[RMDB]
RNA sequence: GGGAACGACUCGAGUAGAGUCGAAAAAGCAUGUUGGGUUCGCAUGGUGCACUAUUGUGUUAUUAGUAACUAAGUAAGCUUACAAUCGAAAAUGUUUAACCAUAAAAGGGUAAAAUGGUGUAAGACAGAUACCCUCUGAGCUUCGGCUCAGAGGGAACAACACAGAAACCUUCGGGUUUCUGUGUUGAAAAGAAACAACAACAACAAC
Reactivity to DMS in 0.01 (KOAc 150mM, MgCl2 10mM, bicine 150mM(pH8.5), 24C), signal-to-noise 2, nucleotides 027 to 156: a140g000c020a070u000g040u020u000g030g010g010u000u010c050g000c110a100u000g020g000u000g020c080a060c020u000a050u000u000g010u010g000u000u000a070u000u000a120g030u000a030a100c030u010a100a160g030u000a090a100g000c050u010u000a030c020a060a110u000c060g000a090a080a060a080u020g020u000u000u000a060a050c030c010a050u000a040a080a090a080g040g000g000u000a020a050a050a060u000g000g000u000g010u000a030a060g000a090c070a100g000a160u000a120c000c000c000u000c000u000g010a040g010c010u000u000c300g070g000c000u000c000a010g000a000g040g030g000a000a000
Reactivity to 2A3 in 0.01 (KOAc 150mM, MgCl2 10mM, bicine 150mM(pH8.5), 24C), signal-to-noise 2, nucleotides 027 to 156: a000g050c020a020u030g010u020u040g020g000g020u100u070c010g000c060a010u070g020g030u020g030c020a010c010u060a060u090u170g010u000g000u060u030a010u040u060a060g070u030a030a040c070u000a120a030g080u010a110a030g070c000u020u070a000c020a050a070u120c070g060a080a010a030a090u040g010u020u110u020a040a010c000c000a000u070a130a090a020a050g050g000g020u090a110a070a000a000u060g000g000u030g010u050a020a020g030a020c000a000g130a080u100a130c000c000c010u000c000u010g000a000g000c000u000u170c300g040g000c000u000c000a010g000a000g010g000g000a000a000

This 207-nucleotide RNA was probed chemically with DMS and 2A3. The RNA was probed in 150 mM KOAc, 10 mM MgCl2 and 150 mM bicine (pH 8.5) at 24 C. DMS adducts were read by reverse transcription with MarathonRT.